[RMDB]
Notes: Chemical mapping of a 177-nucleotide RNA with DMS and 2A3. For DMS, 2,507 sequencing reads were counted. Values are in units of 0.01, from 0 to 300, in steps of 10. The RNA was probed in 150 mM KOAc, 10 mM MgCl2 and 150 mM bicine (pH 8.5) at 24 C. DMS adducts were read by reverse transcription with MarathonRT.

RNA sequence: GGGAACGACUCGAGUAGAGUCGAAAAACCCAGCCUUGAUUGAAGAAUUUGGUAAAGACAUGAAGAUUGUCUACACACCACUUCAUGGUACUGGUGAAAUGUUGGCUCGUCGUGCUCUUGCCCAAGCCUUGGUAGUGGUUUUCGAACCACUACCAAGAAAAGAAACAACAACAACAAC
Reactivity to DMS in 0.01 (KOAc 150mM, MgCl2 10mM, bicine 150mM(pH8.5), 24C), signal-to-noise 3, nucleotides 027 to 126: a070c060c000c000a190g000c160c030u010u000g010a060u000u010g010a060a050g010a110a100u010u010u010g000g010u000a090a080a040g000a040c010a010u000g000a120a070g010a110u000u010g010u000c020u000a070c150a140c170a030c020c040a070c030u000u000c050a060u010g000g010u000a090c110u010g000g020u000g010a060a080a050u000g000u000u020g010g000c020u000c030g030u000c030g000u010g000c080u000c010u000u020g000c020c000c050a110a120g020c160
Reactivity to 2A3 in 0.01 (KOAc 150mM, MgCl2 10mM, bicine 150mM(pH8.5), 24C), signal-to-noise 2, nucleotides 027 to 126: a010c020c010c000a030g020c040c030u120u100g120a150u060u120g070a040a050g060a150a210u180u180u190g020g020u100a160a100a030g000a030c010a010u060g070a070a030g170a240u090u130g010u000c080u110a010c040a000c010a020c060c000a030c020u020u060c030a080u080g160g000u110a090c040u040g000g020u040g030a060a090a140u100g090u150u130g050g000c000u020c050g060u000c020g000u060g040c010u000c000u000u090g080c010c000c020a070a030g000c040